[RMDB]
RNA sequence: GGGAACGACUCGAGUAGAGUCGAAAAGCAUAUCGUAUAAUGCCGCGCGUACGGCAUCGGCGCGCCGCGCGAUUAAUUAAUCGAUAUGCAUGCCGUAUAUAAUCGAUGCUAUACGCGAUUAGCCGUAACUCCUUAACUGGUUCGCCAGUUAAGGAGUAAAAGAAACAACAACAACAAC
Reactivity to 2A3 in 0.01 (KOAc 150mM, MgCl2 10mM, bicine 150mM(pH8.5), 24C), signal-to-noise 4, nucleotides 027 to 126: g000c010a000u000a010u000c000g020u100a070u060a230a060u100g030c000c010g010c000g000c010g020u010a030c130g000g000c010a000u000c000g020g000c000g010c000g000c060c030g020c040g000c030g080a020u070u180a100a060u040u100a000a100u070c000g000a010u000a000u020g000c010a010u060g020c000c010g140u050a140u030a040u080a210a120u110c010g000a000u020g000c000u060a100u030a090c050g050c010g110a230u150u200a030g050c060c030g010u020a040
Reactivity to DMS in 0.01 (KOAc 150mM, MgCl2 10mM, bicine 150mM(pH8.5), 24C), signal-to-noise 3, nucleotides 027 to 126: g000c000a000u010a000u000c000g020u000a160u010a040a050u010g020c060c080g000c030g010c030g030u000a020c050g020g010c010a030u000c010g020g020c030g000c000g020c140c140g050c120g030c090g000a080u010u020a100a090u000u000a060a300u030c000g000a010u000a000u000g000c020a060u000g000c020c040g010u020a090u010a090u000a080a080u010c000g000a030u000g020c020u000a120u000a050c050g030c020g010a150u000u000a120g010c090c030g020u010a110

Conditions: 150 mM KOAc, 10 mM MgCl2 and 150 mM bicine (pH 8.5), 24 C. This 177-nucleotide RNA was probed chemically with 2A3 and DMS. 2A3 adducts were read by reverse transcription with SuperScript II with manganese. The DMS profile rests on 3,221 reads. Source: RMDB library OK2TRN, as collected in RNAgym.